[RMDB]
Annotation
The record gives the reactivity of an RNA of 177 nucleotides to DMS. For DMS, 746 sequencing reads were counted. Conditions: 150 mM KOAc, 10 mM MgCl2 and 150 mM bicine (pH 8.5), 24 C.
RNA sequence: GGGAACGACUCGAGUAGAGUCGAAAAGUGAUACCACGGCCGCGCAGCAGAUCAUCACAAUCAAGCACGAUGAGGACAAGCUUGUUCCCAUCGACAGCCACAAGCUGAUGUGCCUUUCAGGGGAGCCCCGAAACGGGGAGUUCGCUCCCCGUUUCGGAAAAGAAACAACAACAACAAC
Reactivity to DMS in 0.01 (KOAc 150mM, MgCl2 10mM, bicine 150mM(pH8.5), 24C), signal-to-noise 1, nucleotides 027 to 126: g020u000g000a080u000a130c090c050a050c140g000g050c020c000g020c090g000c050a050g030c060a030g010a100u000c050a020u000c040a080c030a130a120u000c110a050a100g010c050a200c020g010a040u020g030a080g000g000a040c040a090a240g030c160u000u000g050u000u010c010c010c000a000u000c080g010a080c050a070g020c010c070a030c190a060a200g010c030u040g000a070u000g000u000g010c050c000u000u000u020c140a070g010g000g020g000a110g010c000c120